RNA sequence: GGGAACGACUCGAGUAGAGUCGAAAAGCUCUGCGAGACAGAUCGAACAACAAAGAGAGAUCGAAAAUCUUAGAGGAGAGAACGAAUGUGUCGACUUCACUAGGACAUUGUCGAUCAGAGGUCCAAAGUCCAUUGAUGGGUUCGCCUAUCGAUGGACAAAAGAAACAACAACAACAAC
Reactivity to DMS in 0.01 (KOAc 150mM, MgCl2 10mM, bicine 150mM(pH8.5), 24C), signal-to-noise 9, nucleotides 027 to 126: g010c010u000c000u000g010c030g000a300g000a030c040a080g010a030u000c000g000a300a260c040a080a100c260a070a120a100g000a070g000a300g000a020u000c010g010a100a090a110a190u010c010u000u000a010g000a060g010g000a010g000a300g010a100a020c010g010a090a110u050g000u040g000u000c000g000a210c000u000u000c000a090c000u000a010g000g000a010c110a070u020u020g000u000c000g000a170u010c010a010g000a020g000g000u010c010c010a050a120a110
Reactivity to 2A3 in 0.01 (KOAc 150mM, MgCl2 10mM, bicine 150mM(pH8.5), 24C), signal-to-noise 9, nucleotides 027 to 126: g020c000u000c000u000g010c020g020a030g000a020c010a010g010a020u010c010g040a040a050c030a040a020c020a020a260a010g100a010g010a000g000a010u010c010g040a030a020a010a030u000c000u000u010a010g000a020g010g010a000g000a000g010a030a010c020g060a200a150u250g060u060g020u020c000g040a200c000u010u000c000a000c010u000a000g000g010a000c020a090u080u150g050u020c010g000a010u030c010a000g010a010g030g030u010c010c000a050a040a010
Chemical mapping of a 177-nucleotide RNA with DMS and 2A3.
Conditions: 150 mM KOAc, 10 mM MgCl2 and 150 mM bicine (pH 8.5), 24 C.
The 2A3 profile rests on 86,346 reads.